[RMDB]
RNA sequence: GGGAACGACUCGAGUAGAGUCGAAAACCCUUGUGGAAGUCAGUGUGGCGAUUCCUCAAGGAUCUAGAACUAGGAAUACUUGACCCAGCAAUCCCAUUACUGGGUAUAUACCCAAAGGAUUAUAAAUCAUUUUACUAUAAAGACACAUACAGAUGUACUAUUAAUGCAUCUUCGGAUGCAUUAAUAGAAAAGAAACAACAACAACAAC
Reactivity to DMS in 0.01 (KOAc 150mM, MgCl2 10mM, bicine 150mM(pH8.5), 24C), signal-to-noise 2, nucleotides 027 to 156: c020c000c020u000u000g040u000g000g000a030a130g030u000c010a150g000u000g040u030g030g030c020g020a200u000u000c010c010u010c030a070a050g060g000a020u010c020u000a110g010a080a090c040u000a060g030g040a110a060u000a100c100u000u010g010a120c000c000c010a030g010c010a070a090u010c070c030c020a200u000u000a000c070u000g010g020g060u000a110u000a130u010a130c030c000c020a070a070a110g000g020a120u000u010a060u000a040a080a110u010c020a060u000u000u010u010a140c070u000a120u000a050a060a040g000a080c020a030c020a060u010a170c100a090g000a040u000g020u000a180
Reactivity to 2A3 in 0.01 (KOAc 150mM, MgCl2 10mM, bicine 150mM(pH8.5), 24C), signal-to-noise 4, nucleotides 027 to 156: c000c000c020u010u020g040u010g000g020a040a030g050u040c090a100g060u070g060u140g260g020c060g060a140u020u060c000c010u000c010a000a030g040g000a030u050c090u130a070g040a090a090c060u050a060g040g050a120a040u090a160c020u090u070g020a030c000c000c000a000g000c020a020a110u080c020c020c030a030u080u140a040c020u030g010g010g000u000a010u010a010u030a040c010c010c000a030a130a050g050g010a040u120u130a080u200a200a140a050u090c030a030u020u130u200u170a110c070u060a010u110a260a130a000g050a020c030a000c000a100u140a070c050a050g080a090u110g030u060a040